Overview:
Chemical mapping of a 207-nucleotide RNA with 2A3 and DMS. For DMS the reverse transcriptase was MarathonRT. Source: RMDB library M2RFPK, as collected in RNAgym. For DMS, 2,591 sequencing reads were counted. The 2A3 profile rests on 2,716 reads.

RNA sequence: GGGAACGACUCGAGUAGAGUCGAAAAGCGUAACGGCUGGGUGUAACCCAACUCUAGGUGUGCUGAUUAGCGGGCUUGACUCCGUAACAAAUAGGCACUGGUGGUAAAAAACAUCCCACCUACUCACAAAGCUCCAAAUUCUUCGGAAUUUGGAGAACAAGUCACGUAUGUUCGCAUACGUGACUUGAAAAGAAACAACAACAACAAC
Reactivity to 2A3 in 0.01 (KOAc 150mM, MgCl2 10mM, bicine 150mM(pH8.5), 24C), signal-to-noise 4, nucleotides 027 to 156: g030c020g030u050a010a050c060g070g020c040u020g020g010g000u060g060u100a070a090c010c000c020a050a060c040u070c050u090a060g080g060u040g000u010g070c030u030g030a140u070u050a060g020c000g000g020g000c050u130u130g020a090c040u000c080c010g000u010a020a000c020a020a110a060u110a070g050g000c010a000c020u010g010g010u030g020g010u040a120a220a010a000a020a000c020a030u060c010c000c000a010c020c010u050a060c050u060c040a060c030a090a100a000g020c010u000c000c000a010a010a010u010u000c000u020u070c180g040g000a000a000u000u010u000g000g000a000g000a010a000
Reactivity to DMS in 0.01 (KOAc 150mM, MgCl2 10mM, bicine 150mM(pH8.5), 24C), signal-to-noise 2, nucleotides 027 to 156: g050c060g010u010a160a100c130g000g000c050u020g000g040g050u050g060u020a080a300c040c010c030a060a080c030u010c060u010a150g010g030u030g010u020g000c020u020g020a120u000u000a190g010c060g000g030g000c040u000u010g050a120c120u000c010c010g020u010a070a110c100a050a090a070u010a140g000g000c030a070c060u000g000g040u030g000g010u010a000a060a070a100a100a060c030a120u000c060c020c020a120c100c020u000a060c040u010c010a120c050a070a080a150g000c010u000c010c000a020a000a020u000u000c000u000u020c290g040g010a040a010u000u000u000g020g000a010g010a000a020

The RNA was probed in 150 mM KOAc, 10 mM MgCl2 and 150 mM bicine (pH 8.5) at 24 C.
2A3 adducts were read by reverse transcription with SuperScript II with manganese.